[RMDB]
RNA sequence: GGGAACGACUCGAGUAGAGUCGAAAACAUGCGAAUCUCACCACCACAACGUCAUCGGUGUUGUCGAUGUCGAGUGAGGCCACCGGUGACUCGAUGUCAACGACGGGACACUGACCGUAGUCCCCGCUACUACAGUCCACUUCGGUGGACUGUAGUAAAAAGAAACAACAACAACAAC
Reactivity to 2A3 in 0.01 (KOAc 150mM, MgCl2 10mM, bicine 150mM(pH8.5), 24C), signal-to-noise 2, nucleotides 027 to 126: c030a030u230g050c040g060a100a070u010c010u010c030a010c020c040a020c000c020a040c030a090a050c090g020u010c000a000u010c000g030g010u050g030u110u220g000u000c010g040a050u150g150u180c090g070a040g150u110g090a040g040g000c010c000a040c000c020g000g000u040g010a000c000u000c010g020a030u050g020u000c030a090a060c080g100a010c030g020g030g000a000c050a010c050u150g070a100c030c020g000u010a020g010u010c000c010c000c010g000c030
Reactivity to DMS in 0.01 (KOAc 150mM, MgCl2 10mM, bicine 150mM(pH8.5), 24C), signal-to-noise 3, nucleotides 027 to 126: c090a030u020g000c070g000a050a090u010c090u010c030a110c040c020a080c090c040a060c080a060a130c110g010u000c010a010u000c010g000g020u000g010u010u010g010u000c000g010a160u000g000u000c070g000a100g010u000g010a270g010g020c030c010a020c030c030g000g000u000g000a010c020u000c110g000a090u000g010u000c040a120a060c060g000a070c030g000g000g010a030c050a070c080u000g010a100c100c050g000u010a080g000u010c030c000c000c140g030c180